[RMDB]
RNA sequence: GGGAACGACUCGAGUAGAGUCGAAAACUACCGCACGUGACGACUUUGGGACAGUUACUCUGGUGGCUUCCGCUACAAACCAUACGCUAGGAGGCAGGUCGUUCGACCGCUGUCUUGCACGUUAUGUGGCGUACGUCCUGUUCGCAGGACGUACGCCAAAAGAAACAACAACAACAAC
Reactivity to 2A3 in 0.01 (KOAc 150mM, MgCl2 10mM, bicine 150mM(pH8.5), 24C), signal-to-noise 2, nucleotides 027 to 126: c050u000a000c070c000g030c070a050c040g020u000g040a060c000g000a020c000u120u130u300g060g010g000a000c000a000g000u030u080a000c030u060c060u200g110g000u070g020g000c000u070u010c000c040g000c080u040a000c050a000a110a100c060c040a150u050a090c090g030c020u030a020g000g000a000g000g000c000a100g000g000u000c000g120u300u090c030g000a020c020c000g000c000u020g080u050c000u000u040g020c010a000c050g030u040u070a050u100g080u000